[RMDB]
RNA sequence: GGGAACGACUCGAGUAGAGUCGAAAAUGCACCAUUUUCAUUGUAGAUAAUGUGUACAAAUUACUGUGAGUGUUACAAGUGAUACUACACUCUAUACAAAGCUUUAUUGGUUUAAUCCGAUUGGGUAGAGUGUACCUCUUUUCGAAGAGGUACACUCAAAAGAAACAACAACAACAAC
Reactivity to 2A3 in 0.01 (KOAc 150mM, MgCl2 10mM, bicine 150mM(pH8.5), 24C), signal-to-noise 2, nucleotides 027 to 126: u150g030c010a000c020c030a030u030u010u020u050c050a040u110u120g150u140a040g010a070u050a070a060u110g050u030g010u060a020c030a020a150a070u140u040a040c020u020g010u060g190a040g060u070g050u120u050a050c020a150a050g050u090g110a070u070a120c050u040a000c000a010c000u000c010u000a030u000a040c030a000a070a010g040c020u030u050u060a050u020u090g000g130u010u190u240a120a240u140c020c010g060a050u010u050g040g000g010u080a050
Reactivity to DMS in 0.01 (KOAc 150mM, MgCl2 10mM, bicine 150mM(pH8.5), 24C), signal-to-noise 2, nucleotides 027 to 126: u000g010c070a060c010c010a040u000u000u000u000c040a110u000u010g000u010a150g010a020u000a030a030u000g020u010g030u010a030c060a060a080a060u000u000a120c100u000g000u000g010a110g010u000g000u000u020a090c160a110a130g040u020g020a120u010a120c150u000a020c010a010c010u000c050u000a060u000a080c110a010a090a140g000c070u000u000u010a060u000u000g000g000u000u010u000a100a040u000c010c010g020a070u000u000g010g010g020u010a110